[RMDB]
RNA sequence: GGGAACGACUCGAGUAGAGUCGAAAAUUGUGGACCCAUUUUCGAUAUUUACUCACAAAUGGAAUUCAAGGGGAACAACUUCGGUCUCAGCACUUUAAUUAUUCUUCUCGUUCCCACCUAAUUUCGCGUUAGCGUCAUAGUUCGCUAUGACGCUAACAAAAGAAACAACAACAACAAC
Reactivity to DMS in 0.01 (KOAc 150mM, MgCl2 10mM, bicine 150mM(pH8.5), 24C), signal-to-noise 4, nucleotides 027 to 126: u000u010g030u010g010g020a170c120c030c070a100u000u000u000u000c010g010a010u000a070u000u000u010a010c030u000c060a140c210a110a120a070u010g000g000a070a080u020u020c130a070a070g000g010g010g000a080a040c070a080a060c110u020u020c110g000g010u020c040u000c110a080g010c090a070c050u020u000u010a040a080u000u000a080u000u000c020u000u000c110u010c000g000u000u000c000c000c000a100c260c130u020a050a090u010u000u000c060g000c270
Reactivity to 2A3 in 0.01 (KOAc 150mM, MgCl2 10mM, bicine 150mM(pH8.5), 24C), signal-to-noise 9, nucleotides 027 to 126: u040u030g060u150g090g120a110c000c000c000a000u000u000u000u000c000g000a000u050a280u290u010u020a030c010u020c020a050c050a080a130a100u170g040g030a030a030u080u050c040a080a060g040g010g000g030a040a050c030a050a040c080u110u090c080g080g030u020c030u010c050a060g080c070a070c050u050u060u070a060a050u070u090a090u090u040c020u080u030c020u010c020g000u000u000c020c000c000a020c000c000u090a130a130u020u070u090c070g000c010
Overview: Structure probing data (DMS and 2A3) for a 177-nucleotide construct. For 2A3 the reverse transcriptase was SuperScript II with manganese. For DMS the reverse transcriptase was MarathonRT. Reactivities are given for positions 27 through 126.